[RMDB]
RNA sequence: GGGAACGACUCGAGUAGAGUCGAAAAGAAAAAGAGCACGAGAUAUCGAAGGCCUGAGAGACUAAUGUCUCGAGUAGUGGAUACGAAGGCCUAAGUAUCGACUACAAGAUAUCGAGUGCUCGAAAAAGGGUUAUUAUUCCUUCGGGAAUAAUAACCCAAAAGAAACAACAACAACAAC
Reactivity to DMS in 0.01 (KOAc 150mM, MgCl2 10mM, bicine 150mM(pH8.5), 24C), signal-to-noise 2, nucleotides 027 to 126: g000a110a010a060a080a090g000a010g000c000a010c000g000a280g000a000u000a000u000c030g050a200a070g000g000c120c080u010g000a130g000a040g000a020c010u010a170a110u080g020u000c010u020c000g000a120g000u000a000g000u000g000g000a020u000a000c000g000a090a110g020g050c020c080u000a000a110g030u000a000u000c010g000a020c020u000a000c000a120a130g000a010u000a020u000c010g010a230g040u000g000c000u000c000g000a000a060a060a130a120
Reactivity to 2A3 in 0.01 (KOAc 150mM, MgCl2 10mM, bicine 150mM(pH8.5), 24C), signal-to-noise 3, nucleotides 027 to 126: g170a010a070a000a000a000g000a000g000c000a000c000g030a030g000a010u010a000u000c030g040a110a010g140g030c090c100u170g010a080g010a000g010a050c010u180a280a200u300g000u050c000u000c000g010a000g000u000a010g000u000g160g040a000u000a030c020g060a100a020g110g020c000c000u000a010a010g000u000a020u030c000g090a000c000u000a000c000a040a040g000a000u000a000u000c010g040a000g000u000g000c000u000c000g000a000a000a000a000a000
This 177-nucleotide RNA was probed chemically with DMS and 2A3. It was measured as part of the RMDB library OK1LIB. The DMS profile rests on 2,481 reads. For 2A3, 1,980 sequencing reads were counted.